[RMDB]
RNA sequence: GGGAACGACUCGAGUAGAGUCGAAAAGAUAUGGAGUAAGGUGCAGACCAACAGCAUAUUUCGGAAACGAAAUAUGACAUGGUCGCACUUACUCCUAAGUCAAAAGCUCGGAGUUCGCUCCGAGCAAGUUUAUCCAAACCUUCGGGUUUGGAUAAACAAAAGAAACAACAACAACAAC
Reactivity to DMS in 0.01 (KOAc 150mM, MgCl2 10mM, bicine 150mM(pH8.5), 24C), signal-to-noise 1, nucleotides 027 to 126: g010a110u000a300u000g000g000a000g010u020a000a040g000g030u000g000c000a150g070a000c000c000a020a120c220a270g000c000a000u000a010u000u020u000c000g000g000a110a040a220c000g000a000a000a000u000a000u000g000a000c080a190u000g040g000u000c000g000c000a020c000u000u000a000c000u000c000c000u030a040a060g000u000c000a100a080a160a190g000c000u000c020g000g000a020g010u000u050c290g000c030u000c000c000g010a020g010c020a000a010